[RMDB]
RNA sequence: GGGAACGACUCGAGUAGAGUCGAAAAUCUACUCCCAAUGCCAUCUUUAUUUCUGAUAGAAAAAUCAAGAAAUACCCUUGUAUGGUAGGUCCUGAUUAUGCUUACUUCAAUGGUGCUAUCAUCCGUGUCACAGGGGCCUUCGGGCCCCUGAAAAGAAACAACAACAACAAC
Reactivity to 2A3 in 0.01 (KOAc 150mM, MgCl2 10mM, bicine 150mM(pH8.5), 24C), signal-to-noise 1, nucleotides 027 to 129: u000c000u000a030c020u010c030c000c000a000a080u080g000c000c000a050u000c000u000u000u000a000u000u010u020c000u000g000a010u110a060g300a000a230a010a000a000u030c060a050a080g070a000a000a000u000a000c000c000c000u040u100g000u050a000u020g020g000u060a000g000g100u000c000c010u000g010a000u000u050a070u170g050c050u120u000a050c000u060u080c080a010a300u060g000g000u000g110c000u060a000u000c000a000u090c020c040g000u010g050u090c000a000
Background: Structure probing data (2A3) for a 170-nucleotide construct. It was measured as part of the RMDB library 15KLIB. The RNA was probed in 150 mM KOAc, 10 mM MgCl2 and 150 mM bicine (pH 8.5) at 24 C. For 2A3 the reverse transcriptase was SuperScript II with manganese.